This 207-nucleotide RNA was probed chemically with 2A3 and DMS. The data come from the RNA Mapping Database (RMDB), library OK3TST. The RNA was probed in 150 mM KOAc, 10 mM MgCl2 and 150 mM bicine (pH 8.5) at 24 C. DMS adducts were read by reverse transcription with MarathonRT.

[RMDB]
RNA sequence: GGGAACGACUCGAGUAGAGUCGAAAAUGAGUAUUGCCUUAUCUCUCGCUGCUGAACUACCAGGUUAGACUUCUUUCUGCAAGUCAUGAGGCUUUCAUAAACUUUUCCUGAAGGCUUUCCGUAGAAUGUACAAUUCCCCUCUGGGCCCAGGCAUGGAAUCAUACUAGCUCUUCGGAGCUAGUAUGAUAAAAGAAACAACAACAACAAC
Reactivity to 2A3 in 0.01 (KOAc 150mM, MgCl2 10mM, bicine 150mM(pH8.5), 24C), signal-to-noise 2, nucleotides 027 to 156: u180g010a020g030u110a090u110u120g000c000c020u100u110a100u020c050u010c010u000c060g020c070u090g030c010u030g070a090a050c030u050a100c080c040a040g100g000u060u060a050g010a030c020u050u000c000u040u210u060c050u070g050c080a020a030g000u030c040a070u090g060a060g000g010c000u010u060u020c070a080u090a090a140a240c060u050u060u190u120c010c040u010g030a040a030g040g000c000u120u070u020c010c000g020u030a040g030a120a050u070g060u060a090c060a120a120u040u040c010c000c000c000u050c040u040g000g000g000c000c000c000a020g000g000c000a010u050g040g050a040
Reactivity to DMS in 0.01 (KOAc 150mM, MgCl2 10mM, bicine 150mM(pH8.5), 24C), signal-to-noise 2, nucleotides 027 to 156: u010g020a150g030u000a090u000u010g010c010c040u020u000a080u000c040u010c030u000c050g000c020u000g000c030u010g020a060a120c050u010a070c030c040a070g020g010u010u000a100g010a090c050u010u000c020u010u010u000c070u050g020c060a020a080g000u010c040a070u000g010a120g040g020c020u000u000u000c030a090u000a050a050a110c060u000u000u000u000c050c030u010g000a080a070g030g020c020u000u000u000c030c050g010u000a060g020a080a060u010g000u020a040c060a060a140u000u000c010c030c000c030u000c040u000g030g010g020c010c020c010a070g010g030c000a100u010g000g020a170